[RMDB]
RNA sequence: GGGAACGACUCGAGUAGAGUCGAAAAUCUGCGCGACGGCGCGCGCCUCCGCGGCCGGCAUGUAAUCUACGUGCGCUAACGAAGCGACUAUCGUGUCUGAUGAAGUCCGAGGAAUUAGCGAUAGCGUGCCUACGCAGUCCUAGCGCGUUCUCUGCGCCGGUUAAGCUAGCUUCGGCUAGCUUAACCGAAAAGAAACAACAACAACAAC
Reactivity to 2A3 in 0.01 (KOAc 150mM, MgCl2 10mM, bicine 150mM(pH8.5), 24C), signal-to-noise 2, nucleotides 027 to 156: u020c000u020g040c010g000c060g060a010c090g000g000c020g000c010g020c020g000c060c030u010c030c020g000c040g030g000c020c030g000g010c010a030u060g040u120a020a210u080c080u110a080c040g090u160g110c000g000c030u050a170a100c110g160a250a010g020c020g060a060c020u070a030u120c010g020u010g050u080c040u130g080a140u090g090a030a000g060u030c050c030g010a030g000g000a070a110u150u080a130g030c040g120a140u100a040g010c020g000u010g000c000c000u010a020c030g000c010a000g030u100c000c010u040a040g010c000g000c000g030u160u110c090u000c000u090g020c010g000c040